About this RNA
Source: RMDB library TTRDES, as collected in RNAgym. Structure probing data (2A3 and DMS) for a 177-nucleotide construct.
RNA sequence: GGGAACGACUCGAGUAGAGUCGAAAAAAAAAAGAUAUGGACGAGAACUACUGCGAAACAAGCGUUGAAAGCUUAUCGGAAACGAUAAGCUGGAGCUUGUAGUAGCAGCUCGUCCUAAGUCAAAAAAGUUAAACGUUAAGUUCGCUUAACGUUUAACAAAAGAAACAACAACAACAAC
Reactivity to 2A3 in 0.01 (KOAc 150mM, MgCl2 10mM, bicine 150mM(pH8.5), 24C), signal-to-noise 2, nucleotides 027 to 126: a000a010a000a000a020a030g050a030u080a020u090g000g010a000c010g050a010g020a100a020c060u260a040c000u300g000c010g000a030a020a020c000a010a000g000c010g240u300u070g010a010a020a010g000c000u000u010a000u010c000g020g000a060a050a020c010g000a000u010a000a000g010c010u000g000g000a000g010c010u000u000g000u020a010g000u010a000g000c000a000g000c000u000c000g000u000c000c000u000a000a000g000u010c020a000a070a090a180a000a000
Reactivity to DMS in 0.01 (KOAc 150mM, MgCl2 10mM, bicine 150mM(pH8.5), 24C), signal-to-noise 4, nucleotides 027 to 126: a000a050a070a080a110a090g010a030u000a280u010g010g000a020c010g010a030g000a070a050c060u010a300c000u000g000c000g000a280a180a080c000a000a000g020c000g000u000u010g000a150a090a020g000c000u000u000a000u000c010g020g000a070a040a050c000g000a000u000a000a000g000c010u000g000g000a040g010c000u000u000g000u020a020g010u000a220g000c000a010g000c000u000c000g010u000c010c000u000a000a070g000u010c010a010a050a070a120a070a100